[RMDB]
Structure probing data (2A3 and DMS) for a 177-nucleotide construct. The RNA was probed in 150 mM KOAc, 10 mM MgCl2 and 150 mM bicine (pH 8.5) at 24 C. For 2A3, 1,766 sequencing reads were counted.

RNA sequence: GGGAACGACUCGAGUAGAGUCGAAAACUUCCGUCGUAAGAUCGGUCCGGCGGAUACGAACAUCGGCGAUGGUCAGGCCAAGCGAUGUCGCAUCGGGGCGAAGCUGGUCGCGCACUUCACGCAUCAAAUUAUUUACCGACUUCGGUCGGUAAAUAAUAAAAGAAACAACAACAACAAC
Reactivity to 2A3 in 0.01 (KOAc 150mM, MgCl2 10mM, bicine 150mM(pH8.5), 24C), signal-to-noise 2, nucleotides 027 to 126: c020u030u000c010c010g050u030c010g050u130a090a030g010a260u130c060g000g050u000c000c020g030g000c060g020g000a020u040a100c090g110a140a010c030a070u080c060g130g000c060g070a120u080g040g070u050c090a060g150g000c020c020a030a000g030c020g050a070u090g050u100c040g010c030a030u090c070g100g000g030g000c040g030a000a020g010c040u040g000g000u050c060g000c020g000c070a030c010u110u100c060a080c090g060c010a030u030c060a150a190
Reactivity to DMS in 0.01 (KOAc 150mM, MgCl2 10mM, bicine 150mM(pH8.5), 24C), signal-to-noise 2, nucleotides 027 to 126: c140u000u010c010c000g050u020c060g020u000a070a110g020a060u000c030g000g010u020c050c000g000g050c030g010g010a030u020a030c090g000a090a080c070a030u000c040g030g020c020g020a120u010g000g010u010c150a130g000g000c000c020a110a170g030c040g000a070u000g000u010c020g010c070a050u010c100g010g010g020g000c040g010a040a150g000c010u000g010g050u000c070g000c090g030c040a070c060u000u010c120a040c090g020c130a100u000c170a050a060